[RMDB]
RNA sequence: GGGAACGACUCGAGUAGAGUCGAAAAGAUAUGGACACUCCCUCGAUGGGACUCGACGAAGCUACGUAACAUCGUUCGGAAACGAACGUGGUAGCAGAGAGUAACAUCGAGGGAGUGUCCUAAGUCACCGAUGUCUAUAGUUCGCUAUAGACAUCGGAAAAGAAACAACAACAACAAC
Reactivity to DMS in 0.01 (KOAc 150mM, MgCl2 10mM, bicine 150mM(pH8.5), 24C), signal-to-noise 2, nucleotides 027 to 126: g000a070u010a300u000g010g010a020c010a000c000u000c000c000c000u010c010g010a010u000g010g000g000a000c000u000c020g020a260c280g020a140a120g010c010u000a020c000g010u010a060a110c210a040u000c010g020u000u000c000g000g000a140a040a260c000g010a000a020c000g060u010g030g030u000a000g040c010a060g000a190g010a020g000u000a010a030c010a000u000c010g000a020g020g000g000a000g000u000g000u000c000c000u000a000a090g010u000c040a300

An RNA of 177 nucleotides, treated with DMS and read out base by base. Conditions: 150 mM KOAc, 10 mM MgCl2 and 150 mM bicine (pH 8.5), 24 C. Values cover nucleotides 27 to 126. Source: RMDB library TTRINS, as collected in RNAgym.